[RMDB]
RNA sequence: GGGAACGACUCGAGUAGAGUCGAAAAGAUCUCCGGUUCGCCGGAGAUCAAAGAAGUCACAACGGCUUCCUGACGUGGCAGAUUGUAUUAUUGGAGCAAAAAAAAUCGUUCCCUUCGGGGAACGAAAGAAUAACAGUUACUUCGGUAACUGUUAUUCAAAAGAAACAACAACAACAAC
Reactivity to 2A3 in 0.01 (KOAc 150mM, MgCl2 10mM, bicine 150mM(pH8.5), 24C), signal-to-noise 5, nucleotides 027 to 126: g000a000u000c000u000c000c010g020g040u040u040c180g030c040c000g010g000a000g000a000u000c000a010a010a000g000a050a020g020u010c000a010c020a120a070c100g080g000c020u230u070c020c010u030g010a030c040g010u010g010g000c020a030g030a250u190u210g140u160a140u280u060a080u090u260g010g000a020g000c000a010a010a030a000a010a000a020a110u020c000g000u000u010c010c010c000u000u010c180g060g000g000g010a000a000c000g000a000a000a010
Reactivity to DMS in 0.01 (KOAc 150mM, MgCl2 10mM, bicine 150mM(pH8.5), 24C), signal-to-noise 4, nucleotides 027 to 126: g000a000u000c000u010c000c000g000g010u000u030c200g040c020c010g010g010a000g020a000u000c000a030a060a110g000a130a120g010u000c020a050c080a080a150c160g000g000c020u000u000c010c020u000g010a090c170g010u010g000g000c020a080g000a190u010u000g000u010a070u010u010a070u000u000g010g000a060g020c050a000a000a010a070a060a040a080a090u000c000g010u000u000c000c000c000u000u010c170g010g010g010g000a010a000c000g000a000a010a060
Structure probing data (2A3 and DMS) for a 177-nucleotide construct. The reactions ran in a buffer of 150 mM KOAc, 10 mM MgCl2 and 150 mM bicine (pH 8.5), at 24 C. Reactivities are given for positions 27 through 126. As a SHAPE reagent, 2A3 marks flexible, mostly unpaired nucleotides at the ribose 2'-OH. DMS adducts were read by reverse transcription with MarathonRT. 2A3 adducts were read by reverse transcription with SuperScript II with manganese. For DMS, 4,496 sequencing reads were counted.